[RMDB]
RNA sequence: GGGAACGACUCGAGUAGAGUCGAAAAGAGCGUGUAGAACUCGACGUACGAAACGCACCUUUGUACGACUCUUUUGAGUCGGUAGUUUUCUACCGUCGAGGAUAGGUGCGUGAUAUACACGCGAAAAGGGUAGCAGAGUCUUCGGAUUCUGUUACCCAAAAGAAACAACAACAACAAC
Reactivity to DMS in 0.01 (KOAc 150mM, MgCl2 10mM, bicine 150mM(pH8.5), 24C), signal-to-noise 9, nucleotides 027 to 126: g010a220g010c000g010u000g010u000a010g000a070a100c010u000c000g000a010c010g000u000a010c010g000a010a020a010c000g000c000a010c000c100u010u050u030g000u000a010c000g010a010c000u000c000u010u020u020u040g010a000g010u000c000g000g000u000a000g010u010u020u010u020c000u000a010c000c000g010u000c000g000a000g010g010a050u030a070g000g000u000g000c000g000u000g000a080u010a140u000a010c000a000c000g010c000g010a040a060a100a110
Reactivity to 2A3 in 0.01 (KOAc 150mM, MgCl2 10mM, bicine 150mM(pH8.5), 24C), signal-to-noise 9, nucleotides 027 to 126: g080a010g000c010g000u000g000u000a010g010a060a020c000u000c000g000a000c000g000u000a000c010g040a020a010a000c000g000c000a000c000c000u050u060u130g000u000a000c000g000a000c000u010c030u040u200u170u300g000a000g000u000c000g010g000u000a000g000u030u120u130u080c000u000a000c000c000g000u000c000g000a000g020g030a030u030a020g000g000u000g000c000g000u000g000a000u000a000u000a010c000a000c000g000c000g020a010a010a010a010
This 177-nucleotide RNA was probed chemically with DMS and 2A3. It was measured as part of the RMDB library OK1LIB. DMS (dimethyl sulfate) methylates the pairing face of unpaired adenines and cytosines.